RNA sequence: GGGAACGACUCGAGUAGAGUCGAAAAGAUAUGGACGUAAUCACCUCCAUUAGCUUUUGACGCUCGUGGGAUCGGAAACGAUCCUUAUCGAGCGAUAAGCUGGGUGGAGGUGAUUACGUCCUAAGUCGACUCUUUUAUUGUUCGCAAUAAAAGAGUCAAAAGAAACAACAACAACAAC
Reactivity to DMS in 0.01 (KOAc 150mM, MgCl2 10mM, bicine 150mM(pH8.5), 24C), signal-to-noise 3, nucleotides 027 to 126: g000a110u010a300u000g020g010a000c000g000u000a010a000u000c000a010c000c000u000c000c000a020u000u010a030g000c010u000u000u000u000g020a280c090g010c010u000c000g040u000g010g010g010a010u000c000g020g000a130a070a220c000g010a000u000c000c000u000u000a040u010c010g010a000g000c000g010a030u000a010a020g020c000u000g020g050g040u000g000g000a010g010g000u000g000a000u000u000a000c010g000u000c000c010u000a000a070g010u010c130

Conditions: 150 mM KOAc, 10 mM MgCl2 and 150 mM bicine (pH 8.5), 24 C.
The record gives the reactivity of an RNA of 177 nucleotides to DMS.
It was measured as part of the RMDB library TTRINS.
For DMS the reverse transcriptase was MarathonRT.